The record gives the reactivity of an RNA of 177 nucleotides to 2A3 and DMS. Reactivities are rounded to 0.1 and cut off at 0 and 3. For 2A3, 718 sequencing reads were counted. The RNA was probed in 150 mM KOAc, 10 mM MgCl2 and 150 mM bicine (pH 8.5) at 24 C. The data come from the RNA Mapping Database (RMDB), library OK1LIB.
RNA sequence: GGGAACGACUCGAGUAGAGUCGAAAAGUGGUCGAGUGCGAAGCACUGGGGUAGAGAAAUAAAGAGAUAGAGAACUACCCCGUCAGUCAGUCACUCUCUGUCUGAAUCUCUCUCUCAAAGACCACGAAUGGGAUUAGUCGUUCGCGACUAAUCCCAUAAAAGAAACAACAACAACAAC
Reactivity to 2A3 in 0.01 (KOAc 150mM, MgCl2 10mM, bicine 150mM(pH8.5), 24C), signal-to-noise 1, nucleotides 027 to 126: g000u000g000g000u010c000g010a020g040u000g000c040g030a110a080g020c000a000c010u030g000g070g000g000u030a000g000a000g060a060a160a060u230a070a090a050g060a090g020a020u090a170g020a040g000a040a000c000u070a060c000c060c000c000g020u000c000a000g030u000c000a000g010u080c060a010c120u140c030u000c020u020g000u010c000u000g040a120a120u000c000u000c000u000c000u050c000u010c070a120a050a000g000a010c000c000a000c000g000a000
Reactivity to DMS in 0.01 (KOAc 150mM, MgCl2 10mM, bicine 150mM(pH8.5), 24C), signal-to-noise 1, nucleotides 027 to 126: g000u000g000g000u000c020g030a180g050u000g050c010g040a110a070g000c000a000c010u000g010g010g000g000u010a000g000a030g000a090a060a200u050a060a140a070g000a000g000a020u000a050g030a040g000a050a020c090u000a080c060c050c000c050g000u010c130a090g030u010c110a020g010u000c100a060c100u010c000u000c020u000g020u010c000u020g000a180a110u000c030u000c000u040c020u000c000u000c060a060a090a120g000a000c000c020a040c000g010a200